[RMDB]
RNA sequence: GGGAACGACUCGAGUAGAGUCGAAAAGCACUGCCUGUUUAUGGUGGAAAUUAAUGUCAAAACCAUAGAAGCCGCGUUGGGUCGUGGAAGUUCUAUGAAACCGUAUCAUAGGAUAUGGGCAACGCAGCUAUAAUAUUUAUUUCGAUAAAUAUUAUAGAAAAGAAACAACAACAACAAC
Reactivity to DMS in 0.01 (KOAc 150mM, MgCl2 10mM, bicine 150mM(pH8.5), 24C), signal-to-noise 5, nucleotides 027 to 126: g000c060a240c150u010g010c030c010u000g020u010u020u010a010u000g000g000u010g000g000a170a130a060u020u040a100a100u040g000u000c060a050a170a170a030c040c010a030u010a020g010a000a080g000c020c060g020c010g000u000u010g010g000g020u000c020g000u000g000g000a070a120g010u000u000c000u000a010u000g000a020a110a130c200c220g010u030a100u000c000a030u010a010g000g000a010u010a070u010g000g010g010c020a000a080c060g000c030a090g000
Reactivity to 2A3 in 0.01 (KOAc 150mM, MgCl2 10mM, bicine 150mM(pH8.5), 24C), signal-to-noise 4, nucleotides 027 to 126: g030c010a010c090u040g030c000c020u080g050u040u100u000a020u020g020g030u020g030g080a110a060a070u210u190a150a070u280g030u130c040a090a000a000a050c010c000a000u000a010g050a010a010g020c020c010g000c010g040u040u070g050g060g150u090c010g000u000g000g020a090a030g000u000u000c000u000a000u000g020a110a010a010c070c060g100u140a020u090c000a030u030a010g040g000a010u030a040u140g000g000g000c010a000a000c030g010c020a010g000